[RMDB]
RNA sequence: GGGAACGACUCGAGUAGAGUCGAAAACGGCUUUGACUGUGAUUCAUGGCAAAAAAGCUGGAAUAACCCUGCCAAGUCUUAGAAGCUUUAAGAUUCAUCGCAUUGAACUUGAUACGUAUAGUACAGCCACAAUUCAUGUGUUCGCACAUGAAUUGUGAAAAGAAACAACAACAACAAC
Reactivity to DMS in 0.01 (KOAc 150mM, MgCl2 10mM, bicine 150mM(pH8.5), 24C), signal-to-noise 4, nucleotides 027 to 126: c050g000g010c030u000u000u010g020a160c140u020g010u000g000a090u000u010c070a090u000g000g000c030a000a040a090a060a020a020g020c010u000g010g010a110a180u000a110a150c020c010c020u000g010c020c100a060a090g000u000c020u010u000a040g020a120a120g010c120u010u000u000a040a080g000a080u000u000c300a050u000c100g040c040a110u020u010g010a070a090c100u000u000g000a090u000a060c080g010u000a060u010a060g000u010a050c110a060g010c210
Reactivity to 2A3 in 0.01 (KOAc 150mM, MgCl2 10mM, bicine 150mM(pH8.5), 24C), signal-to-noise 2, nucleotides 027 to 126: c000g010g000c030u030u030u020g110a120c060u060g020u020g060a040u160u110c040a030u080g050g000c000a010a120a000a170a000a000g000c010u020g000g040a050a020u080a030a020c000c000c000u020g000c000c030a050a010g020u000c010u050u120a060g010a140a040g060c050u090u080u050a050a020g050a050u060u020c010a020u110c050g020c040a050u030u110g050a050a040c030u040u040g020a060u070a110c020g030u090a050u040a220g050u040a040c010a020g030c010